Record summary:
Structure probing data (DMS and 2A3) for a 177-nucleotide construct. For 2A3 the reverse transcriptase was SuperScript II with manganese. Conditions: 150 mM KOAc, 10 mM MgCl2 and 150 mM bicine (pH 8.5), 24 C. DMS adducts were read by reverse transcription with MarathonRT. For DMS, 1,293 sequencing reads were counted. Values are in units of 0.01, from 0 to 300, in steps of 10. It was measured as part of the RMDB library OK2TRN.
RNA sequence: GGGAACGACUCGAGUAGAGUCGAAAAGAACAAGAACGACUACAAGAAGUUCUACGAGCAGUUCUCCAAGAACCUCAAGCUCGGCAUUCACGAGGACACCACCAACAGACUGAAGGUGGCAGAGCUGAUAGAACGACAGAUUCGUCUGUCGUUCUAUAAAAGAAACAACAACAACAAC
Reactivity to DMS in 0.01 (KOAc 150mM, MgCl2 10mM, bicine 150mM(pH8.5), 24C), signal-to-noise 3, nucleotides 027 to 126: g000a200a060c180a110a080g010a030a050c030g020a290c060u010a100c230a110a120g000a060a270g000u000u000c010u000a200c020g000a040g000c150a140g020u000u000c010u000c020c120a060a050g010a030a100c010c070u000c040a070a120g000c000u000c040g000g010c100a040u000u000c060a100c150g000a060g000g000a120c160a070c010c000a040c010c010a000a290c080a090g000a100c190u020g000a040a150g010g010u010g020g000c030a080g000a020g020c040u000g000
Reactivity to 2A3 in 0.01 (KOAc 150mM, MgCl2 10mM, bicine 150mM(pH8.5), 24C), signal-to-noise 2, nucleotides 027 to 126: g020a060a060c080a090a000g000a040a000c030g050a020c080u140a060c110a140a060g140a130a000g050u000u000c000u060a080c050g010a020g000c010a010g010u000u010c090u000c010c040a060a050g060a120a110c000c020u060c120a080a020g000c020u000c000g030g070c040a090u180u130c070a040c070g000a010g000g050a050c000a010c010c000a010c020c000a030a060c010a100g240a150c140u220g040a080a040g020g000u010g000g020c020a020g000a010g010c010u010g030